[RMDB]
RNA sequence: GGGAACGACUCGAGUAGAGUCGAAAAUGAUCGAGAGAUCUAACGAUGUACGCGAGUCAAUGGCACAGACUCGAGCGAAAGCUCGGUCGAAAGACCGCGUACAUCGGUCGGCAAGUGUCCAGUCAAACAUACGUGCAGGAUUCGUCCUGCACGUAUGAAAAGAAACAACAACAACAAC
Reactivity to 2A3 in 0.01 (KOAc 150mM, MgCl2 10mM, bicine 150mM(pH8.5), 24C), signal-to-noise 2, nucleotides 027 to 126: u120g000a000u010c010g000a000g000a000g000a110u000c000u040a070a020c020g000a000u000g000u000a010c010g020c010g030a030g020u010c050a020a140u080g040g030c060a040c010a100g000a000c030u020c130g000a000g000c010g050a120a010a000g000c000u000c000g000g000u010c000g020a020a000a010g000a000c010c000g000c000g000u000a000c000a000u000c000g000g000u060c040g020g030c050a170a200g040u020g030u070c010c010a000g020u010c000a060a050a060
Reactivity to DMS in 0.01 (KOAc 150mM, MgCl2 10mM, bicine 150mM(pH8.5), 24C), signal-to-noise 7, nucleotides 027 to 126: u010g010a010u000c010g000a270g010a260g010a010u000c000u010a070a120c010g010a020u000g000u000a000c000g020c000g000a050g010u000c000a050a070u000g000g010c060a040c090a230g000a000c000u000c010g010a010g010c000g010a120a080a160g010c000u000c000g000g000u000c010g010a070a090a130g010a000c000c000g020c000g010u000a010c000a000u000c000g010g000u010c100g000g000c040a030a070g000u000g000u000c010c020a160g000u000c030a090a090a210